[RMDB]
RNA sequence: GGGAACGACUCGAGUAGAGUCGAAAACAGAAGCUGCCAAACUUGAGGCUGAAGUAAGCAAGGCACAAGAAACAAUCAAAGCUGCAGAAGUCUUAAUUAAUCAGCUUGACAGAGAACAUAAGAGAUGGAAUGCACAGGUUUGUUUGAGAGAGGGGCCCAUGACAUAAGGCUUCGGCCUUAUGUCAUGAAAAGAAACAACAACAACAAC
Reactivity to 2A3 in 0.01 (KOAc 150mM, MgCl2 10mM, bicine 150mM(pH8.5), 24C), signal-to-noise 1, nucleotides 027 to 156: c030a010g070a060a000g000c080u090g030c040c020a100a070a100c030u020u080g030a010g000g000c000u020g020a050a000g040u120a100a020g050c050a010a050g040g000c050a020c030a090a080g110a130a120a050c020a000a030u090c060a070a060a000g000c000u050g000c060a010g060a180a000g040u050c010u040u040a050a010u110u050a030a080u090c000a000g020c000u020u020g020a000c030a050g050a000g010a060a020c040a050u220a150a040g000a000g000a040u050g010g130a110a040u090g030c030a010c000a040g010g070u050u020u020g120u000u140u090g030a020g010a010g010a020g000g000g010g010c000c030
Reactivity to DMS in 0.01 (KOAc 150mM, MgCl2 10mM, bicine 150mM(pH8.5), 24C), signal-to-noise 1, nucleotides 027 to 156: c030a090g030a120a090g030c030u000g010c020c020a070a140a090c030u010u000g010a060g030g020c000u000g000a140a200g000u000a020a050g030c010a130a140g050g020c030a140c090a060a060g000a070a130a120c120a120a140u000c040a010a090a200g020c080u000g010c080a040g040a210a070g030u000c070u000u000a030a160u020u020a080a210u010c050a070g010c000u000u000g010a130c010a100g000a150g030a030a060c070a050u030a100a100g010a020g020a060u000g000g010a140a070u000g000c030a080c120a110g020g000u000u000u000g030u000u000u030g000a120g000a090g000a060g020g010g070g020c040c100